This 177-nucleotide RNA was probed chemically with DMS and 2A3. The RNA was probed in 150 mM KOAc, 10 mM MgCl2 and 150 mM bicine (pH 8.5) at 24 C.

[RMDB]
RNA sequence: GGGAACGACUCGAGUAGAGUCGAAAACACAUGCCUUCAUAUCGGUUAAGAACUCUUAACUCUGAUGGCUUUCGAGUUAUGUGGUGCAUUGAAGCUCUCCCUUCAAUUCAACGUACCGUUCCGUCAAAGCUCUUAAGUUGUUCGCAACUUAAGAGCUAAAAGAAACAACAACAACAAC
Reactivity to DMS in 0.01 (KOAc 150mM, MgCl2 10mM, bicine 150mM(pH8.5), 24C), signal-to-noise 3, nucleotides 027 to 126: c130a100c210a090u020g000c020c030u010u000c010a050u020a120u030c220g020g000u000u000a030a030g010a210a130c300u000c000u000u000a010a020c000u020c070u010g020a010u000g010g030c020u000u020u000c070g010a050g010u000u010a050u000g000u000g020g030u000g000c050a030u000u000g010a010a010g010c090u010c060u000c070c040c010u000u010c060a050a110u000u000c050a030a040c060g030u000a010c020c010g000u020u000c010c000g000u010c100a040a100
Reactivity to 2A3 in 0.01 (KOAc 150mM, MgCl2 10mM, bicine 150mM(pH8.5), 24C), signal-to-noise 2, nucleotides 027 to 126: c070a010c020a090u120g000c020c000u020u050c030a020u080a050u300c040g000g000u010u010a030a020g050a240a220c060u030c000u290u020a020a000c000u000c040u160g030a030u040g030g070c000u000u080u020c040g030a030g000u050u060a060u110g130u120g020g050u020g000c020a020u010u030g030a020a010g000c020u040c040u040c090c030c000u010u020c000a030a020u000u090c000a020a030c030g000u010a040c040c010g010u010u010c020c000g000u070c120a120a030
DMS adducts were read by reverse transcription with MarathonRT.